[RMDB]
RNA sequence: GGGAACGACUCGAGUAGAGUCGAAAAGCCAGUCAGAGGGCGCUACCAUGCAAACUAGGGCUGGCUACUCUUGCACAGAAUCACCUUUCUAUAAUAACCAGUGCAAGAAGGGUUAUUAUACCAUUUAAAAAUCGUGAAUGCUUCGGCAUUCACGAAACGUAGAGCACUUCUUCGGAAGUGCUCUACGAAAAGAAACAACAACAACAAC
Reactivity to 2A3 in 0.01 (KOAc 150mM, MgCl2 10mM, bicine 150mM(pH8.5), 24C), signal-to-noise 1, nucleotides 027 to 156: g000c000c000a000g020u010c000a030g000a040g020g000g010c010g010c000u080a250c070c110a100u300g040c000a000a000a050c000u000a010g010g000g050c000u000g010g010c000u000a000c000u000c000u000u000g020c000a000c000a000g110a110a060u040c010a280c080c020u140u300u160c140u100a010u000a000a000u000a000a000c000c000a000g020u000g000c000a010a010g000a000a000g000g000g000u010u010a010u000u000a010u000a100c040c000a110u170u290u300a140a150a010a070a080u000c000g000u010g000a020a000u020g000c020u090u000c120g050g010c030a000u000u040c000a000c000g000a010a010a010
Chemical mapping of a 207-nucleotide RNA with 2A3.
It was measured as part of the RMDB library M2RFOK.
The RNA was probed in 150 mM KOAc, 10 mM MgCl2 and 150 mM bicine (pH 8.5) at 24 C.
Values cover nucleotides 27 to 156.